[RMDB]
RNA sequence: GGGAACGACUCGAGUAGAGUCGAAAAUUGGGUUCAUGUGUUAGUACAUGCACGCAUGCACACACAUGCACACACACAUGCAUGUGAUCCUUGUGUCCGUGUGCACCUGAACCAACAUGCAUGUCCAUGUGCCCACACACCUCAAAACACACAGCAACAUAAUACGCUGAUUCGUCAGCGUAUUAUGAAAAGAAACAACAACAACAAC
Reactivity to 2A3 in 0.01 (KOAc 150mM, MgCl2 10mM, bicine 150mM(pH8.5), 24C), signal-to-noise 9, nucleotides 027 to 156: u090u040g040g000g010u060u070c030a020u050g070u020g030u080u110a080g020u070a030c010a020u020g010c030a010c050g020c010a010u060g020c050a020c000a000c000a000c000a050u010g010c020a030c000a000c000a010c000a000c010a100u020g030c010a010u020g030u030g050a080u120c030c040u030u040g010u000g010u040c080c070g040u040g020u030g030c010a020c010c030u030g030a050a040c040c010a020a030c030a020u060g010c020a030u050g020u030c030c000a010u020g020u040g040c000c030c000a020c000a000c000a020c010c030u130c110a070a080a080a020c150a020c080a010c020a060g170c040a060a070
Reactivity to DMS in 0.01 (KOAc 150mM, MgCl2 10mM, bicine 150mM(pH8.5), 24C), signal-to-noise 4, nucleotides 027 to 156: u000u000g020g020g030u010u000c020a050u000g020u000g000u000u020a090g030u000a020c030a020u000g030c060a080c100g040c020a060u000g020c020a070c060a230c040a020c030a030u000g000c040a040c030a100c100a110c220a090c110a040u000g010c020a030u020g040u010g010a070u000c040c060u000u000g010u000g020u000c100c120g030u020g060u000g040c010a030c020c030u010g010a070a060c010c030a040a050c030a040u000g030c030a050u010g020u000c080c040a040u010g020u000g020c000c030c020a120c060a050c030a070c040c010u000c060a060a040a090a060c050a080c030a070c060a110g000c050a090a180
The record gives the reactivity of an RNA of 207 nucleotides to 2A3 and DMS.
For 2A3, 38,394 sequencing reads were counted.
It was measured as part of the RMDB library OK3TST.
The RNA was probed in 150 mM KOAc, 10 mM MgCl2 and 150 mM bicine (pH 8.5) at 24 C.
DMS adducts were read by reverse transcription with MarathonRT.